[RMDB]
Annotation:
An RNA of 207 nucleotides, treated with 2A3 and DMS and read out base by base. For 2A3 the reverse transcriptase was SuperScript II with manganese. The reactions ran in a buffer of 150 mM KOAc, 10 mM MgCl2 and 150 mM bicine (pH 8.5), at 24 C. The 2A3 profile rests on 1,990 reads. Source: RMDB library OK3TST, as collected in RNAgym.
RNA sequence: GGGAACGACUCGAGUAGAGUCGAAAAUCAAGUCCGCUGGUUUGACAAUUCGUGUAAAUAGCACUAACCCUGCUAUUAUGGAUCGCGUUAAUGCCGUAAACUCAAUGAUAUUGAAUGGCGAAGGCGAGCGCAGGUUGCUGGUUAAUACCAAUAGGUGGAAUGGAAAUCAUUUCGAUGAUUUCCAUUCAAAAGAAACAACAACAACAAC
Reactivity to 2A3 in 0.01 (KOAc 150mM, MgCl2 10mM, bicine 150mM(pH8.5), 24C), signal-to-noise 3, nucleotides 027 to 156: u060c010a030a000g110u020c010c030g020c100u050g050g000u040u040u060g040a050c070a130a110u110u090c070g000u030g030u090a030a050a070u030a050g000c010a020c030u000a030a030c010c000c000u000g000c010u010a010u030u040a040u070g120g040a060u060c010g000c020g060u040u080a100a000u220g000c000c000g060u050a030a090a040c020u020c050a050a060u130g130a090u060a080u260u070g070a060a050u080g020g000c060g020a070a040g020g000c020g020a020g010c040g000c020a000g040g050u050u050g060c030u020g000g050u050u090a050a010u060a150c010c020a030a070u060a130g070g010u050g050
Reactivity to DMS in 0.01 (KOAc 150mM, MgCl2 10mM, bicine 150mM(pH8.5), 24C), signal-to-noise 2, nucleotides 027 to 156: u010c060a040a200g000u000c010c030g060c030u010g000g000u020u000u010g040a050c040a040a100u010u000c020g030u000g030u000a050a000a020u000a020g000c000a020c050u000a080a100c090c100c220u000g040c010u000a070u000u000a100u010g030g010a060u000c020g020c060g020u000u010a060a090u010g030c040c030g030u020a050a060a080c030u000c020a050a060u000g000a120u000a300u000u000g000a060a070u000g020g010c030g030a100a130g020g020c020g010a040g000c030g020c040a050g020g020u000u010g040c020u010g010g000u000u000a090a160u000a080c050c030a070a140u000a070g020g040u000g000